[RMDB]
RNA sequence: GGGAACGACUCGAGUAGAGUCGAAAACAUGCGAUCUCUAGCACUAGACGCUAGGUACCUAGUGAUCGCAGGUACAGCUAGUGACUAGACGCCAUGGUACCGUACAGAUGAUCGUACUCAUGGGAUCAGACUAAAGCAGAUUCGUCUGCUUUAGUCUAAAAGAAACAACAACAACAAC
Reactivity to DMS in 0.01 (KOAc 150mM, MgCl2 10mM, bicine 150mM(pH8.5), 24C), signal-to-noise 8, nucleotides 027 to 126: c180a170u000g000c030g010a050u000c030u000c000u000a020g020c070a110c010u000a020g020a150c100g020c100u000a050g010g010u000a020c060c000u000a030g000u000g010a040u000c060g010c230a010g000g010u000a010c020a140g010c030u000a000g010u000g000a140c010u000a020g000a070c120g010c070c060a070u010g010g010u000a090c180c060g010u000a110c090a060g010a100u000g000a040u000c030g020u000a050c050u000c080a090u010g010g020g010a050u000c060
Reactivity to 2A3 in 0.01 (KOAc 150mM, MgCl2 10mM, bicine 150mM(pH8.5), 24C), signal-to-noise 8, nucleotides 027 to 126: c030a040u130g010c020g030a120u030c020u000c010u060a010g000c010a010c020u020a020g090a120c040g060c140u060a060g070g050u000a000c000c000u010a020g030u030g110a130u110c060g000c040a000g000g000u000a010c010a060g050c020u020a010g010u020g070a170c000u000a010g030a040c040g020c010c000a100u110g030g010u050a050c020c040g020u080a050c060a050g140a070u160g020a050u150c040g020u030a050c060u070c120a070u100g150g040g000a030u050c030